[RMDB]
RNA sequence: GGGAACGACUCGAGUAGAGUCGAAAAAGAUGGAAAGAUUGCUUGAGCCCAGGAGUUCAAGUCUGCAGUAAGCUAUCAUGAGCUAUCAUGACACUGCACUCCAGCCUGCACAGCACAAGACCCUGACGCGUCUGUGAUGAUUCGUCAUCACAGACGCAAAAGAAACAACAACAACAAC
Reactivity to DMS in 0.01 (KOAc 150mM, MgCl2 10mM, bicine 150mM(pH8.5), 24C), signal-to-noise 2, nucleotides 027 to 126: a060g010a080u010g000g010a110a120a130g000a140u000u000g000c020u020u000g000a090g010c040c080c060a130g000g000a130g000u000u000c050a040a080g000u000c130u000g000c060a020g010u000a090a060g040c180u010a140u020c050a010u010g000a000g000c300u010a040u000c000a000u000g000a010c050a030c000u020g010c030a060c120u000c000c040a100g020c040c010u000g030c090a070c060a050g040c040a050c060a030a100g000a090c050c000c010u010g000a140c180
Reactivity to 2A3 in 0.01 (KOAc 150mM, MgCl2 10mM, bicine 150mM(pH8.5), 24C), signal-to-noise 1, nucleotides 027 to 126: a000g090a040u110g020g010a100a080a050g170a190u100u100g020c000u020u000g000a060g000c000c010c060a060g000g090a120g010u040u010c020a040a010g050u030c080u060g020c000a010g030u060a100a080g020c040u070a060u080c010a010u030g030a000g100c070u210a070u190c000a000u000g010a000c000a000c060u020g000c010a040c010u000c060c000a010g030c000c000u020g000c070a030c010a030g070c060a010c000a080a040g010a040c000c040c020u000g040a030c070